Structure probing data (DMS and 2A3) for a 177-nucleotide construct. The RNA was probed in 150 mM KOAc, 10 mM MgCl2 and 150 mM bicine (pH 8.5) at 24 C. The data come from the RNA Mapping Database (RMDB), library OK1LIB. In probing experiments dimethyl sulfate is read out at A N1 and C N3, which are open when not base-paired. DMS adducts were read by reverse transcription with MarathonRT. For 2A3, 14,599 sequencing reads were counted.
RNA sequence: GGGAACGACUCGAGUAGAGUCGAAAACUCGAGGUGGCGGCCGCGGUGCGCGCCCGGGCAUUGGCCGACAAGGCCCUGCUCGACAUCUUUGUCGACGCCGCCGCCGGUAUGGAGCAGGCCCAACAGGUCAUUAUUUCAUCUUCGGAUGAAAUAAUGAAAAAGAAACAACAACAACAAC
Reactivity to DMS in 0.01 (KOAc 150mM, MgCl2 10mM, bicine 150mM(pH8.5), 24C), signal-to-noise 6, nucleotides 027 to 126: c010u000c010g000a160g000g030u000g000g000c000g020g000c020c200g000c030g000g000u010g010c100g010c070g010c070c040c030g000g000g010c010a030u020u030g010g040c020c020g000a170c190a150a170g000g000c000c000c300u000g010c010u010c010g010a070c050a060u030c140u030u020u020g000u010c010g010a150c240g010c010c020g010c000c020g000c000c000g000g000u030a090u030g010g000a060g000c040a060g000g000c010c000c020a100a090c180a150g000g010
Reactivity to 2A3 in 0.01 (KOAc 150mM, MgCl2 10mM, bicine 150mM(pH8.5), 24C), signal-to-noise 9, nucleotides 027 to 126: c010u010c010g040a090g020g000u030g020g010c000g010g000c020c030g010c040g020g030u140g050c140g000c030g040c040c030c000g000g010g000c030a070u100u250g010g000c020c010g070a150c140a100a090g000g000c000c000c010u010g000c000u010c010g030a030c000a060u110c110u110u190u210g080u090c020g010a050c040g000c010c000g000c000c000g000c000c000g000g010u210a180u130g080g000a020g010c080a040g060g050c000c010c010a040a040c050a070g060g090